[RMDB]
This 177-nucleotide RNA was probed chemically with DMS. For DMS the reverse transcriptase was MarathonRT. In probing experiments dimethyl sulfate is read out at A N1 and C N3, which are open when not base-paired. Reactivities are given for positions 27 through 126.

RNA sequence: GGGAACGACUCGAGUAGAGUCGAAAAUUAAAGUUGCAGAUACUGGUGAACUCGGUGAAGGUAUUUCUAACAUUCUUACCCUAACCCGUAAAGUUGAUAUUACCAAGCUGGGUGAACAACGUACUGGGACAGGCAGACUAUUCGUAGUCUGCCUGUCAAAAGAAACAACAACAACAAC
Reactivity to DMS in 0.01 (KOAc 150mM, MgCl2 10mM, bicine 150mM(pH8.5), 24C), signal-to-noise 1, nucleotides 027 to 126: u030u000a010a110a070g000u000u000g000c040a020g010a180u000a030c000u000g030g050u000g020a150a030c030u000c010g020g010u000g000a110a240g020g000u000a010u000u000u000c050u000a070a120c050a080u010u000c200u000u000a040c000c080c060u000a040a060c190c180c280g000u000a000a060a070g000u000u000g020a020u000a030u000u000a040c000c030a040a300g000c040u010g010g000g000u000g000a140a070c000a040a050c110g020u000a030c070u000g040g000